Annotation:
This 177-nucleotide RNA was probed chemically with 2A3. For 2A3, 1,004 sequencing reads were counted. Conditions: 150 mM KOAc, 10 mM MgCl2 and 150 mM bicine (pH 8.5), 24 C.
[RMDB]
RNA sequence: GGGAACGACUCGAGUAGAGUCGAAAAAGCACCGCUGGUAGUGUACGCACUACCAGCGGUGCAAGUGGAUGAUGAUGCCGAGGACACCCGAGCAGAGGCAAUGAGGACUCUUCGCUUCGCUGACUAACCAGUUAGAGCUAUUCGUAGCUCUAACUGGAAAAGAAACAACAACAACAAC
Reactivity to 2A3 in 0.01 (KOAc 150mM, MgCl2 10mM, bicine 150mM(pH8.5), 24C), signal-to-noise 2, nucleotides 027 to 126: a020g000c000a000c000c000g020c000u000g010g000u010a040g000u000g040u060a070c280g020c090a000c000u030a000c000c030a030g010c000g000g000u000g000c000a000a030g020u000g000g030a010u060g020a020u020g010a040u100g010c010c000g010a030g020g010a040c010a060c040c000c010g040a020g000c010a030g070a040g020g010c060a010a080u230g070a120g020g150a110c030u000c000u070u060c100g000c040u090u070c000g050c020u020g040a130c050u170a110a100